[RMDB]
RNA sequence: GGGAACGACUCGAGUAGAGUCGAAAACGGUGUGAAAGGUGUUAAAUCACGCGCCGUCGGUCGAAGACAGACGAAGACUAAGGUAGUGACGCCUGGAAGGAGAGAGAGAGAAGAGAAGUGUAAAUACCAAUCAUAGCUAAUUCGUUAGCUAUGAUUGAAAAGAAACAACAACAACAAC
Reactivity to 2A3 in 0.01 (KOAc 150mM, MgCl2 10mM, bicine 150mM(pH8.5), 24C), signal-to-noise 9, nucleotides 027 to 126: c010g030g000u040g000u030g120a180a080a060g070g010u030g050u140u210a080a130a130u090c020a030c050g020c030g000c010c000g050u050c040g010g020u030c020g040a110a020g050a060c050a040g060a030c050g050a100a020g010a020c030u070a080a040g060g000u040a030g060u030g060a040c040g020c020c010u020g020g020a050a030g030g000a030g000a000g000a000g000a000g000a000g010a080a010g040a010g030a090a030g040u060g020u130a090a130a060u140a080c040
Reactivity to DMS in 0.01 (KOAc 150mM, MgCl2 10mM, bicine 150mM(pH8.5), 24C), signal-to-noise 9, nucleotides 027 to 126: c040g010g010u000g020u000g010a080a110a090g010g020u000g010u010u010a070a110a100u000c020a070c040g010c050g020c030c010g010u010c060g010g020u000c040g010a110a110g010a090c100a050g010a080c070g000a100a110g000a070c090u010a070a090g010g010u000a070g010u000g000a100c100g010c040c020u000g000g010a080a060g000g000a050g010a050g000a060g000a060g010a070g010a050a050g000a050g010a020a070g020u000g010u000a050a060a080u010a090c170